[RMDB]
RNA sequence: GGGAACGACUCGAGUAGAGUCGAAAAUCACUUUGGGACGCUUAGAAUUUGAGCGGCUAAAUUUUGAGAUUCGUAAGAAACUGACGAAUUGGUCCUGGCUCAAUUCAAUUUCUUUGAUUUCGCAUUUAAGAGAGAAUUUUUGAGAGAGUGGUAAUGGCUAGAUUUAUAGCUUCGGUUGUGAGUCUAGAAAAGAAACAACAACAACAAC
Reactivity to DMS in 0.01 (KOAc 150mM, MgCl2 10mM, bicine 150mM(pH8.5), 24C), signal-to-noise 3, nucleotides 027 to 156: u020c020a040c050u000u000u000g020g030g010a020c020g010c020u020u000a060g000a100a140u000u000u000g010a050g000c040g020g030c020u010a020a030a150u000u000u010u000g020a200g020a160u000u000c030g010u020a120a140g000a090a060a060c070u010g010a110c080g010a030a060u000u000g000g010u000c050c020u000g010g020c050u000c040a030a070u000u000c040a060a140u000u000u000c020u000u000u000g010a090u000u000u000c110g010c050a090u000u000u000a080a130g000a140g010a130g000a050a080u010u010u000u010u000g010a080g000a140g020a090g030u010g010g020u010a040a050u000g010g030
Reactivity to 2A3 in 0.01 (KOAc 150mM, MgCl2 10mM, bicine 150mM(pH8.5), 24C), signal-to-noise 3, nucleotides 027 to 156: u060c000a000c030u050u070u070g050g010g060a070c010g030c040u060u050a050g020a170a150u180u190u230g010a030g000c030g040g000c020u080a080a080a060u160u180u080u180g060a060g010a010u020u020c000g020u030a090a020g030a190a100a050c100u100g020a020c040g010a020a020u000u040g040g000u030c000c020u050g070g000c010u000c030a020a000u040u020c000a030a060u020u080u000c020u050u070u050g020a050u020u020u080c110g000c080a040u060u080u120a060a000g030a000g000a000g010a040a040u000u060u010u110u110g020a090g000a020g000a010g000u030g010g010u030a070a030u070g050g000